[RMDB]
RNA sequence: GGGAACGACUCGAGUAGAGUCGAAAAAAGAGUAUGAACAACUUCCAUACACACACACGAAGCACACACACACAAGCACACACACACUCAGCAUCACUUAUUGUAAAAUUUAAAUCUUAAUUGAAUUUCAAUAAAUGUAAUUGGGACUUUAAAACAAGUAUCAUCGCUACUUCGGUAGCGAUGAUACAAAAGAAACAACAACAACAAC
Reactivity to 2A3 in 0.01 (KOAc 150mM, MgCl2 10mM, bicine 150mM(pH8.5), 24C), signal-to-noise 1, nucleotides 027 to 156: a000a000g180a020g010u040a030u070g030a000a000c000a020a000c100u050u060c010c000a000u030a010c120a000c000a010c000a000c000a020c000g080a060a000g010c000a040c000a000c000a000c000a000c000a010c010a130a010g030c080a010c010a000c000a000c010a000c000a000c080u000c020a010g000c000a000u000c000a000c000u000u000a000u040u000g010u010a060a070a090a070u000u070u040a070a030a010u020c010u060u270a140a140u240u050g010a000a010u300u300u300c000a000a010u300a080a030a260u040g000u000a030a080u070u020g000g000g060a050c000u170u060u060a050a250a050a000c040a030a050
The record gives the reactivity of an RNA of 207 nucleotides to 2A3. 2A3 adducts were read by reverse transcription with SuperScript II with manganese.